The record gives the reactivity of an RNA of 207 nucleotides to 2A3 and DMS.

[RMDB]
RNA sequence: GGGAACGACUCGAGUAGAGUCGAAAAGGCUGCUGCCGGAGCCGAUACCGGAAUACGAGACCUCAUGUGCGGUCGAAUGCACUGAAGUACGAAAGUACGAAGAGGUCAGACCGAGGACCGAGACUCGAUAUGCUCGUUAGAUGGAGCUUUACAUCAAGCUACUGAGGUAUUUCGAUACCUCAGUAGCAAAAGAAACAACAACAACAAC
Reactivity to 2A3 in 0.01 (KOAc 150mM, MgCl2 10mM, bicine 150mM(pH8.5), 24C), signal-to-noise 2, nucleotides 027 to 156: g000g000c010u030g000c010u070g000c120c000g010g000a000g020c070c080g040a030u060a050c030c000g000g020a080a100u110a050c110g010a050g010a110c010c010u000c020a040u090g010u060g000c010g050g050u110c040g030a030a030u100g000c030a000c040u050g060a110a020g000u000a000c020g050a120a020a000g000u000a000c030g000a050a020g040a000g000g000u000c000a010g010a010c050c020g030a010g000g020a010c000c050g080a020g040a070c010u010c020g040a060u040a030u150g000c000u010c010g040u040u100a050g010a120u080g110g020a010g020c000u070u110u020a080c080a030u060c040a070a000
Reactivity to DMS in 0.01 (KOAc 150mM, MgCl2 10mM, bicine 150mM(pH8.5), 24C), signal-to-noise 1, nucleotides 027 to 156: g040g040c000u000g010c020u000g020c060c080g000g000a090g030c000c010g000a170u000a120c000c030g000g020a100a050u000a140c050g000a200g000a060c010c020u000c000a170u000g040u000g000c040g030g000u000c060g010a060a120u000g000c000a060c040u000g020a100a170g040u010a020c020g000a300a080a260g000u000a000c020g050a100a140g020a060g000g000u010c030a150g010a050c070c040g010a070g030g010a100c080c010g010a150g000a190c050u000c020g000a070u000a050u010g020c030u000c030g000u010u000a160g000a190u000g000g000a050g000c080u000u000u000a120c050a100u000c030a060a300
Conditions: 150 mM KOAc, 10 mM MgCl2 and 150 mM bicine (pH 8.5), 24 C. For DMS the reverse transcriptase was MarathonRT. For 2A3, 1,131 sequencing reads were counted. It was measured as part of the RMDB library OK3TST.